[RMDB]
Notes
Structure probing data (2A3 and DMS) for a 177-nucleotide construct. The reactions ran in a buffer of 150 mM KOAc, 10 mM MgCl2 and 150 mM bicine (pH 8.5), at 24 C. The DMS profile rests on 955 reads. For 2A3, 1,124 sequencing reads were counted.
RNA sequence: GGGAACGACUCGAGUAGAGUCGAAAACGCAAGUCUCUAACAUGCGCAGCAAGACGAAAGGAUGGCUCAGCCAUCUGGCGGUAGAGGUUCGAAGCUUCACCAGCGGAACAUGGACUGGUGCGGUAGGCCGGAGUGAUUACUUCGGUAAUCACUCCGGAAAAGAAACAACAACAACAAC
Reactivity to 2A3 in 0.01 (KOAc 150mM, MgCl2 10mM, bicine 150mM(pH8.5), 24C), signal-to-noise 1, nucleotides 027 to 126: c070g030c070a070a020g040u010c000u000c000u100a060a030c050a120u170g040c060g000c030a040g060c050a070a050g150a200c070g080a040a040a040g020g000a000u000g020g010c060u110c300a040g000c010c000a020u010c010u000g000g000c060g000g000u010a000g010a010g060g000u030u090c060g050a090a000g000c020u000u030c020a020c000c030a000g000c090g030g070a090a020c070a150u190g060g020a030c020u020g000g000u020g100c000g000g060u020a030g100g060
Reactivity to DMS in 0.01 (KOAc 150mM, MgCl2 10mM, bicine 150mM(pH8.5), 24C), signal-to-noise 2, nucleotides 027 to 126: c080g040c130a130a120g040u000c000u020c050u000a160a160c030a100u020g010c060g030c080a110g020c110a090a060g010a060c040g000a060a100a060g000g020a000u000g000g040c010u020c270a130g010c000c010a010u000c000u000g010g010c110g000g010u000a030g010a070g000g000u000u000c100g000a060a210g030c030u000u000c010a010c020c000a030g000c000g050g020a100a130c270a060u000g020g030a110c000u000g020g050u000g030c040g000g030u010a040g000g010